Structure probing data (2A3 and DMS) for a 177-nucleotide construct. For DMS, 1,345 sequencing reads were counted. For DMS the reverse transcriptase was MarathonRT. The RNA was probed in 150 mM KOAc, 10 mM MgCl2 and 150 mM bicine (pH 8.5) at 24 C. Source: RMDB library TTRDEL, as collected in RNAgym. 2A3 adducts were read by reverse transcription with SuperScript II with manganese.

RNA sequence: GGGAACGACUCGAGUAGAGUCGAAAAGAUAUGGAACUAACCUCGGGUGCGUUGAUCUCUGAUCGGAAACGAUCAGAGGGGAGCACAUUUAGUUCCUAAGUCAAACAUUGUCCUUCGGGACAAUGAAGCAUUCCGUGUAGUUCGCUACACGGAAUGCAAAAGAAACAACAACAACAAC
Reactivity to 2A3 in 0.01 (KOAc 150mM, MgCl2 10mM, bicine 150mM(pH8.5), 24C), signal-to-noise 2, nucleotides 027 to 126: g000a010u020a020u060g000g010a000a010c010u020a030a070c090c170u180c300g300g060g000u010g000c010g150u240u040g000a000u000c000u000c010u000g010a010u010c000g000g000a010a010a000c010g000a000u000c000a000g020a000g000g000g090g150a020g020c000a000c010a030u020u050u030a020g000u010u000c000c010u010a000a000g010u000c000a060a020a010c000a020u000u010g000u000c030c000u060u120c300g060g000g000a010c000a010a000u040g000a060a020
Reactivity to DMS in 0.01 (KOAc 150mM, MgCl2 10mM, bicine 150mM(pH8.5), 24C), signal-to-noise 2, nucleotides 027 to 126: g000a030u000a010u020g010g000a010a020c000u000a000a030c300c300u000c220g000g010g020u000g000c010g010u000u000g000a020u040c000u000c010u000g000a000u000c000g000g000a000a000a010c000g000a030u000c000a010g000a000g000g000g040g020a010g010c000a010c020a160u000u000u000a030g000u000u000c000c010u000a000a090g000u000c000a100a150a210c010a000u000u000g000u000c010c040u000u020c250g000g000g010a000c000a000a000u000g010a110a050